An RNA of 207 nucleotides, treated with 2A3 and DMS and read out base by base. Values cover nucleotides 27 to 156. Conditions: 150 mM KOAc, 10 mM MgCl2 and 150 mM bicine (pH 8.5), 24 C. 2A3 adducts were read by reverse transcription with SuperScript II with manganese. The 2A3 profile rests on 826 reads.
RNA sequence: GGGAACGACUCGAGUAGAGUCGAAAAAAAGCGCCAGCGUACCGUCUUGGGCGAUCUGCUGGUCUGGUGAAAUGACGGCAGGCGUCCAGCGGAACAUUUCACGCGUGUUCCGUUCAGCCCCCUCUAAGCCGCCACCGAGUGCCGAAGGAUUCUGCGGCUAUUGCUGCAUAUUCGUAUGCAGCAAUAGAAAAGAAACAACAACAACAAC
Reactivity to 2A3 in 0.01 (KOAc 150mM, MgCl2 10mM, bicine 150mM(pH8.5), 24C), signal-to-noise 1, nucleotides 027 to 156: a000a000a020g030c060g000c040c040a060g000c050g120u060a080c040c010g050u050c090u130u140g040g020g000c010g070a300u050c030u010g020c000u180g070g080u030c010u000g000g090u160g110a120a140a200u160g010a020c020g000g030c000a010g000g000c000g020u000c000c000a000g040c000g000g000a000a000c020a020u070u110u080c070a050c010g050c030g010u000g000u020u020c010c020g000u060u050c130a160g020c020c000c000c010c060u000c040u040a060a030g000c010c000g000c000c040a070c000c010g050a050g010u080g010c020c000g030a050a010g030g000a020u080u050c000u070g000c020g010g010
Reactivity to DMS in 0.01 (KOAc 150mM, MgCl2 10mM, bicine 150mM(pH8.5), 24C), signal-to-noise 3, nucleotides 027 to 156: a050a040a040g020c040g020c030c020a060g060c040g020u010a100c030c000g040u000c040u010u000g040g070g020c000g030a060u010c010u000g010c000u010g030g000u000c020u010g070g010u010g010a110a160a110u000g010a030c020g020g000c000a040g010g000c030g010u000c020c000a050g020c000g000g010a060a070c030a090u000u000u000c110a070c100g000c130g010u000g010u000u010c000c010g000u000u000c040a120g000c010c010c000c010c010u010c040u000a050a100g000c010c010g020c020c020a120c030c020g000a110g010u000g020c020c010g000a160a120g000g000a230u000u000c030u010g010c030g030g000